[RMDB]
Overview:
The data come from the RNA Mapping Database (RMDB), library OK2TST. Chemical mapping of a 177-nucleotide RNA with DMS and 2A3. The RNA was probed in 150 mM KOAc, 10 mM MgCl2 and 150 mM bicine (pH 8.5) at 24 C. High DMS reactivity at an A or C suggests that its Watson-Crick edge is free. DMS adducts were read by reverse transcription with MarathonRT. The DMS profile rests on 2,194 reads.
RNA sequence: GGGAACGACUCGAGUAGAGUCGAAAAGUUGCGCUGGUGUCGCCGGGUCUGCGUGCCGCCCACAACGCGCCGCCGAAAGCGGCCGUCAAUUGCGGACGAGGCGUCCUGACCACCGGCACGCAGAAACGACCUUUUACGACUUCGGUCGUAAAAGGUCAAAAGAAACAACAACAACAAC
Reactivity to DMS in 0.01 (KOAc 150mM, MgCl2 10mM, bicine 150mM(pH8.5), 24C), signal-to-noise 3, nucleotides 027 to 126: g010u000u000g030c040g000c020u000g020g020u000g000u010c040g030c030c080g010g020g010u000c020u000g010c000g010u000g010c040c010g000c010c050c030a070c220a070a040c010g020c200g020c000c000g020c010c030g010a080a120a300g040c020g000g010c020c040g000u000c080a110a120u000u010g000c110g030g000a050c030g010a130g020g020c030g010u000c040c050u020g000a110c100c040a060c270c040g000g010c000a020c030g010c000a020g010a040a080a080c110
Reactivity to 2A3 in 0.01 (KOAc 150mM, MgCl2 10mM, bicine 150mM(pH8.5), 24C), signal-to-noise 3, nucleotides 027 to 126: g070u070u040g050c040g000c010u070g010g090u080g040u140c030g030c040c010g090g000g030u030c000u020g030c010g040u030g100c000c000g040c020c010c000a050c040a010a010c000g050c080g030c030c000g010c010c010g260a120a080a000g000c000g000g020c010c020g010u000c040a100a240u170u220g040c070g020g050a030c010g040a080g080g130c050g050u040c020c010u060g060a100c020c020a040c040c020g010g000c000a000c000g010c000a000g070a020a050a000c070